[RMDB]
RNA sequence: GGGAACGACUCGAGUAGAGUCGAAAAAGAAAAGCGGAGGAGGGUUAUGGAUUGCGCUAAGUCCGCCCGCGCGUGGUGUGGGCUGGAAUUCGUGAAUGGAGGAUAAUUAAUGCCGCGCGGCCAAAAACAUUUAGUAAUCGUUCGCGAUUACUAAAUGAAAAGAAACAACAACAACAAC
Reactivity to 2A3 in 0.01 (KOAc 150mM, MgCl2 10mM, bicine 150mM(pH8.5), 24C), signal-to-noise 2, nucleotides 027 to 126: a000g090a010a050a010a000g060c070g050g030a040g030g060a040g050g000g010u080u110a090u140g010g000a050u050u130g020c020g000c060u040a070a010g030u020c010c010g000c000c010c000g010c000g010c030g100u070g040g110u070g020u020g030g000g040c070u100g030g040a030a050u050u050c050g060u080g070a070a050u070g030g020a020g050g010a020u050a080a080u230u060a080a050u110g010c000c000g000c020g010c050g040g030c000c000a000a130a030a010a010
Reactivity to DMS in 0.01 (KOAc 150mM, MgCl2 10mM, bicine 150mM(pH8.5), 24C), signal-to-noise 4, nucleotides 027 to 126: a080g010a090a070a100a110g030c110g020g010a050g000g010a080g020g000g000u010u010a050u000g000g010a080u000u010g010c060g020c100u020a070a070g000u000c020c020g010c020c010c020g010c020g010c100g020u000g020g010u000g030u000g000g000g000c020u020g020g000a050a060u000u000c070g010u000g010a070a060u000g010g000a070g000g000a090u010a040a080u010u000a070a110u010g010c030c020g020c060g020c040g010g010c060c070a030a070a060a070a090

An RNA of 177 nucleotides, treated with 2A3 and DMS and read out base by base.
Values cover nucleotides 27 to 126.
The 2A3 profile rests on 2,583 reads.
2A3 adducts were read by reverse transcription with SuperScript II with manganese.